Source: RMDB library M2PK50, as collected in RNAgym. Structure probing data (2A3 and DMS) for a 177-nucleotide construct. High DMS reactivity at an A or C suggests that its Watson-Crick edge is free. The RNA was probed in 150 mM KOAc, 10 mM MgCl2 and 150 mM bicine (pH 8.5) at 24 C. For DMS, 4,951 sequencing reads were counted.
[RMDB]
RNA sequence: GGGAACGACUCGAGUAGAGUCGAAAACUCUGAGUCUUCGGACUCAGAGAAACGCUUUCGACUCUGAUACCAACAAACGCGAGUUUGUUGGUAUAAUCGCUAAAAGGUGGGAGUUCGCUCCCACCAACAACGAGAUUAUCUUCGGAUAAUCUCGUUGAAAAGAAACAACAACAACAAC
Reactivity to 2A3 in 0.01 (KOAc 150mM, MgCl2 10mM, bicine 150mM(pH8.5), 24C), signal-to-noise 2, nucleotides 027 to 126: c000u000c000u000g010a000g010u010c010u030u120c230g130g000a000c010u010c000a010g000a010g000a000a010a000c070g020c080u000u010u020c000g010a000c000u000c000u010g010a000u010a010c020c000a000a000c000a000a010a000c000g050c030g040a030g070u020u000u010g000u000u010g000g000u000a000u000a000a000u000c010g000c100u140a060a130a090a200g000g000u010g000g010g010a010g020u090u100c160g120c000u010c000c000c000a000c000c000a010a010
Reactivity to DMS in 0.01 (KOAc 150mM, MgCl2 10mM, bicine 150mM(pH8.5), 24C), signal-to-noise 5, nucleotides 027 to 126: c000u000c000u000g010a020g010u000c000u000u010c190g010g000a010c010u000c000a000g010a000g010a020a060a060c300g000c210u000u000u000c000g000a010c000u000c000u000g020a040u000a010c000c000a010a000c000a000a000a000c000g010c300g010a200g000u000u000u000g000u000u000g000g000u010a000u000a020a060u000c010g010c180u010a060a050a070a080g000g030u000g010g010g000a020g000u000u010c200g020c000u000c000c000c000a010c020c000a010a040